[RMDB]
RNA sequence: GGGAACGACUCGAGUAGAGUCGAAAAGCGUGAACGCCUUAUCCGGCCUACGGAUGGCGCGGGAAUUUGUAGGCCUGAUAAGACGCGUUAGCGUCGCAUCAGGCAUCUGCGCACGACUGCCGGAUGCAAUGACUCGAAUUUUCGAAUUCGAGUCAUUAAAAGAAACAACAACAACAAC
Reactivity to DMS in 0.01 (KOAc 150mM, MgCl2 10mM, bicine 150mM(pH8.5), 24C), signal-to-noise 6, nucleotides 027 to 126: g000c050g010u000g000a120a100c070g010c020c050u000u010a040u000c000c040g000g010c030c140u010a080c060g010g010a120u000g010g010c020g050c030g000g000g010a110a100u010u000u000g010u000a090g010g010c000c000u010g010a010u000a060a180g000a010c050g010c010g010u000u020a080g010c000g020u000c030g010c280a020u000c010a020g010g010c000a020u000c020u000g000c060g020c040a050c060g010a200c180u000g010c000c000g010g000a010u000g000c120
Reactivity to 2A3 in 0.01 (KOAc 150mM, MgCl2 10mM, bicine 150mM(pH8.5), 24C), signal-to-noise 2, nucleotides 027 to 126: g010c020g060u110g120a170a040c040g020c010c020u050u070a020u020c000c000g010g000c030c040u090a070c040g170g080a170u130g090g000c020g010c010g000g040g080a100a160u110u110u180g150u170a080g070g050c000c000u000g010a000u010a040a000g010a010c020g000c000g040u050u070a040g010c000g030u020c020g000c010a020u010c000a000g000g020c010a010u000c010u000g000c050g000c010a040c040g100a050c060u040g000c000c000g000g000a000u010g000c020